[RMDB]
RNA sequence: GGGAACGACUCGAGUAGAGUCGAAAAACAGUCAGUACGCUGACUGAGGGAAACGGGAGCCGGGCUUGGGACAGGAGCCAUCCCAAGUCCAAGGCCAAGUAGGCUCUAGUGAUGGUACGCCAUCACAAAAACUGGUCUACCUUCGGGUAGACCAGAACAGUACGUUUUGGUUCGCCAAAACGUACUGAAAAGAAACAACAACAACAAC
Reactivity to 2A3 in 0.01 (KOAc 150mM, MgCl2 10mM, bicine 150mM(pH8.5), 24C), signal-to-noise 3, nucleotides 027 to 156: a000c010a000g000u000c000a000g000u030a050c220g060c150u000g000a010c000u010g020a060g010g050g020a030a220a090c120g040g010g030a070g030c060c030g020g000g000c010u000u010g010g010g000a010c010a060g030g030a000g010c010c000a010u000c000c000c000a000a000g000u020c010c010a050a060g020g000c040c050a030a050g040u100a110g070g000c000u010c010u040a070g000u000g000a000u000g010g000u030a020c230g010c030c000a010u020c010a000c000a000a060a000a000a000c000u000g000g000u000c000u010a010c000c000u020u110c250g060g000g000u000a000g000a000c000c000a000g000a010a000